[RMDB]
RNA sequence: GGGAACGACUCGAGUAGAGUCGAAAACAACCAUUCUUGUCAGAGAUGCGAACCGAGAUUCUUUUCUCUUAAAACGGUGUCUACGAUUUCUCGGGAUUUUCGGACACUCUCAUCAUCGGUUACAUCCACCGCUAGCCAGUUUCGACUGGCUAGCGGUAAAAGAAACAACAACAACAAC
Reactivity to 2A3 in 0.01 (KOAc 150mM, MgCl2 10mM, bicine 150mM(pH8.5), 24C), signal-to-noise 2, nucleotides 027 to 126: c040a010a000c000c000a050u100u130c040u080u080g030u020c030a000g060a040g020a090u030g060c110g050a030a000c000c000g020a020g000a000u120u030c120u110u070u230u050c220u030c000u150u300a130a040a040a050c010g050g000u000g000u000c070u220a110c040g040a060u010u070u000c130u190c120g070g110g030a050u050u100u030u080c030g020g000a000c000a000c000u050c010u070c020a040u020c010a060u040c030g040g010u000u000a000c030a000u000c000c020
An RNA of 177 nucleotides, treated with 2A3 and read out base by base. The reactions ran in a buffer of 150 mM KOAc, 10 mM MgCl2 and 150 mM bicine (pH 8.5), at 24 C. It was measured as part of the RMDB library OK1LIB. The 2A3 profile rests on 662 reads.